[RMDB]
RNA sequence: GGGAACGACUCGAGUAGAGUCGAAAAUAAAAUCUUAGAAUCUACAUUAGAUGACAUUAGUGGUAAAGACACCAUAGAAACUUUAGUUCCUCUUGGUGCUGGCUCCUUCAUUAAUGCAGAGAUUAAAGAUUAGGCUAUGAUUCGUCAUAGCCUAAUCAAAAGAAACAACAACAACAAC
Reactivity to DMS in 0.01 (KOAc 150mM, MgCl2 10mM, bicine 150mM(pH8.5), 24C), signal-to-noise 4, nucleotides 027 to 126: u030a080a070a130a060u010c010u000u010a110g010a120a040u000c000u000a040c080a070u020u020a020g010a070u000g000a130c300a040u010u000a040g010u020g000g030u010a110a100a030g010a170c040a000c010c060a040u020a040g010a070a030a020c040u010u030u040a080g000u020u000c040c020u000c080u030u000g000g030u010g000c020u000g010g010c060u010c050c020u000u000c000a010u000u000a020a030u010g000c100a090g010a040g000a030u000u010a060a090a110
Reactivity to 2A3 in 0.01 (KOAc 150mM, MgCl2 10mM, bicine 150mM(pH8.5), 24C), signal-to-noise 7, nucleotides 027 to 126: u160a010a060a010a010u040c050u050u050a070g100a080a060u020c020u050a070c040a080u100u120a090g050a150u070g020a010c020a100u060u140a070g040u070g040g020u100a120a120a010g060a070c010a010c010c010a020u070a090g040a020a060a020c050u180u220u130a120g020u030u030c030c010u030c050u010u030g030g000u010g000c030u020g030g040c050u060c030c010u070u080c010a020u000u030a030a010u010g010c050a020g010a020g020a090u060u130a110a060a020

Chemical mapping of a 177-nucleotide RNA with DMS and 2A3. Reactivities are given for positions 27 through 126. Source: RMDB library OK1LIB, as collected in RNAgym. The reactions ran in a buffer of 150 mM KOAc, 10 mM MgCl2 and 150 mM bicine (pH 8.5), at 24 C. The DMS profile rests on 6,957 reads.